The record gives the reactivity of an RNA of 177 nucleotides to 2A3.
The RNA was probed in 150 mM KOAc, 10 mM MgCl2 and 150 mM bicine (pH 8.5) at 24 C.
2A3 adducts were read by reverse transcription with SuperScript II with manganese.
For 2A3, 601 sequencing reads were counted.
The data come from the RNA Mapping Database (RMDB), library OK1LIB.
[RMDB]
RNA sequence: GGGAACGACUCGAGUAGAGUCGAAAAGCAGGUCGACUAGGACGAGGUGCACAUCGGUGCCGCCGGUUAGCACCGCGAUGCCACGUUCGGCGACGUCGGGCUGGGUCAACCGGCCGGCAAGGAUGCGGCACGGCGGAGCAUUCGUGCUCCGCCGUGCAAAAGAAACAACAACAACAAC
Reactivity to 2A3 in 0.01 (KOAc 150mM, MgCl2 10mM, bicine 150mM(pH8.5), 24C), signal-to-noise 2, nucleotides 027 to 126: g050c060a040g040g050u120c010g020a140c150u210a150g010g030a020c020g010a020g150g000u060g000c040a000c020a010u020c120g070g000u090g000c000c000g050c030c000g000g090u060u120a000g000c020a070c050c000g000c030g100a110u060g070c050c010a130c060g240u130u190c180g070g060c040g090a090c040g000u090c090g000g000g000c010u120g030g050g020u050c000a000a000c000c010g000g080c120c000g070g000c000a000a010g020g000a040u020g050c090g030